[RMDB]
Overview: Source: RMDB library OK2TRN, as collected in RNAgym. This 177-nucleotide RNA was probed chemically with 2A3 and DMS. Reactivities are given for positions 27 through 126.
RNA sequence: GGGAACGACUCGAGUAGAGUCGAAAAUUGUCAUUGAGAAUAAGGCACUACUAAAGCUAAAAUCAUACCUCCUCAUGAUAGUGUUGCAGCCCGUUGCCUGGCUCAACAAUGGAAAGAUUUCAGCCUCACCCCUGACAAUAUUCGUAUUGUCAGGGGUAAAAGAAACAACAACAACAAC
Reactivity to 2A3 in 0.01 (KOAc 150mM, MgCl2 10mM, bicine 150mM(pH8.5), 24C), signal-to-noise 1, nucleotides 027 to 126: u100u020g040u040c020a030u110u000g050a030g030a110a080u130a190a110g110g000c030a010c030u130a000c010u090a160a010a000g000c020u010a000a000a070a140u070c030a020u040a150c030c010u030c010c020u070c010a020u030g070a060u050a090g090u080g000u000u030g040c050a000g030c020c010c070g030u070u040g000c050c010u000g000g010c010u000c000a020a030c040a010a040u060g020g010a110a020a060g020a030u050u030u030c010a010g020c050c050u090c020
Reactivity to DMS in 0.01 (KOAc 150mM, MgCl2 10mM, bicine 150mM(pH8.5), 24C), signal-to-noise 2, nucleotides 027 to 126: u010u000g010u000c020a050u010u000g020a100g000a060a030u030a120a100g020g000c010a060c120u000a040c080u000a090a100a040g020c050u000a070a040a070a050u000c020a030u000a080c050c040u000c080c010u010c060a040u000g020a070u000a050g050u000g000u000u000g010c170a070g010c000c020c120g040u010u010g030c120c020u000g010g000c010u000c040a040a020c030a060a050u010g010g000a040a070a100g000a120u000u010u000c050a050g000c020c100u010c220
The DMS profile rests on 1,538 reads.